RNA sequence: GGGAACGACUCGAGUAGAGUCGAAAACUGGACGACAUCGAUGAUGCGAGUGUCACCCUGGUGCUGCCCGAGAAGGCCCUCUUCGCCGAGGAUCAGGAACCGCCGAGCGCCUCCAUCAUCAUCGUGCAGUCCUUAUUACUUUCGAGUAAUAAGGACUAAAAGAAACAACAACAACAAC
Reactivity to 2A3 in 0.01 (KOAc 150mM, MgCl2 10mM, bicine 150mM(pH8.5), 24C), signal-to-noise 7, nucleotides 027 to 126: c010u020g030g090a000c010g010a010c020a180u150c160g010a010u010g000a010u020g030c140g030a010g010u150g060u110c040a060c010c010c020u030g020g010u090g090c070u050g020c010c010c030g020a060g030a050a050g030g000c030c020c000u070c020u060u060c050g090c110c010g020a040g010g020a040u060c030a020g000g040a060a070c050c040g030c040c070g070a050g030c060g020c020c010u010c000c000a010u010c000a000u010c000a000u000c010g010u040g020c020
Reactivity to DMS in 0.01 (KOAc 150mM, MgCl2 10mM, bicine 150mM(pH8.5), 24C), signal-to-noise 8, nucleotides 027 to 126: c040u000g000g000a040c010g010a050c250a110u010c140g000a030u000g010a030u000g010c150g010a040g010u000g010u010c050a070c060c010c010u000g040g010u000g020c120u000g000c060c010c030g010a150g010a130a170g000g000c050c030c030u000c030u000u000c270g010c220c150g000a050g000g000a070u010c050a070g000g000a080a090c170c050g010c030c020g000a050g010c070g010c040c000u000c000c020a010u000c010a010u000c010a050u000c030g000u000g000c080